[RMDB]
An RNA of 207 nucleotides, treated with DMS and 2A3 and read out base by base. The reactions ran in a buffer of 150 mM KOAc, 10 mM MgCl2 and 150 mM bicine (pH 8.5), at 24 C. For DMS the reverse transcriptase was MarathonRT. For DMS, 2,831 sequencing reads were counted.

RNA sequence: GGGAACGACUCGAGUAGAGUCGAAAAAUCAGCGGGCGCUAUCAUGCAAACUAGGAUUGUCUGCUCAUGCACAGAACCAACUACCGAUAACUAACAGUGCAUGAAGGUUAGUUAUUCCAUAUUAAUUAAAACUCGUAAUUCUUCGGAAUUACGAGAACGAUAGUUGUUUGUUCGCAAACAACUAUCGAAAAGAAACAACAACAACAAC
Reactivity to DMS in 0.01 (KOAc 150mM, MgCl2 10mM, bicine 150mM(pH8.5), 24C), signal-to-noise 2, nucleotides 027 to 156: a060u000c040a070g010c060g040g010g000c060g000c060u000a070u000c060a100u000g010c020a100a090a110c140u000a200g020g010a070u010u000g000u000c000u010g010c000u010c050a060u000g060c000a060c010a100g000a060a170c060c030a070a130c090u000a180c060c040g010a070u000a000a090c020u000a040a040c030a140g010u030g000c010a020u000g010a110a140g000g010u000u010a010g010u010u000a000u000u010c030c050a100u010a130u000u020a070a110u020u030a040a090a090a200c000u000c000g010u000a000a020u000u010c010u000u000c300g040g010a010a010u000u020a000c000g010a000g000a030a040
Reactivity to 2A3 in 0.01 (KOAc 150mM, MgCl2 10mM, bicine 150mM(pH8.5), 24C), signal-to-noise 7, nucleotides 027 to 156: a000u060c030a020g030c010g010g020g000c030g000c090u050a040u130c040a050u130g050c030a060a080a110c100u110a080g090g000a120u060u120g030u030c020u030g010c000u000c010a020u060g010c020a030c010a050g080a120a060c050c020a050a070c050u130a110c040c090g020a010u000a020a010c000u000a010a020c000a010g010u010g060c010a000u000g020a020a020g040g010u010u010a000g000u000u010a010u110u070c040c010a040u110a070u230u250a130a100u130u140a060a130a040a060c000u000c000g000u000a000a000u000u000c010u020u030c120g070g010a000a000u000u000a000c000g000a000g000a010a000